[RMDB]
RNA sequence: GGGAACGACUCGAGUAGAGUCGAAAAAUUUAUCCAUCCGAUCCUGAACGGUUCCCUGGUGGCAUGGUCGAUACUAAUGAGCGAACUAUGACACCUGGGCGAACUGUCCAGGCGGGGUUUGAAGCGGCCUAUAGGAGUAGUUCGCUACUCCUAUAGGAAAAGAAACAACAACAACAAC
Reactivity to DMS in 0.01 (KOAc 150mM, MgCl2 10mM, bicine 150mM(pH8.5), 24C), signal-to-noise 3, nucleotides 027 to 126: a120u020u010u000a060u010c020c010a160u020c010c010g000a120u010c000c000u000g000a030a020c010g010g010u000u000c000c000c000u000g010g020u000g000g000c000a010u000g000g020u000c020g010a110u000a170c170u010a100a150u010g000a160g000c000g000a090a040c000u000a020u000g000a040c000a010c010c000u000g010g010g010c210g000a010a000c020u000g000u000c020c000a000g000g010c040g000g010g000g000u000u000u000g010a080a080g020c160g020g010
Reactivity to 2A3 in 0.01 (KOAc 150mM, MgCl2 10mM, bicine 150mM(pH8.5), 24C), signal-to-noise 2, nucleotides 027 to 126: a000u080u120u070a060u020c000c000a030u050c000c000g030a070u050c010c010u000g030a030a010c000g000g000u010u000c000c000c000u000g020g000u010g010g000c020a000u010g010g030u010c010g060a050u070a220c090u260a300a160u260g050a010g100c020g050a120a030c000u000a000u030g010a000c000a000c030c000u040g040g000g000c040g000a010a010c020u010g010u000c000c000a000g000g000c000g010g000g010g030u040u100u200g070a070a030g090c050g090g010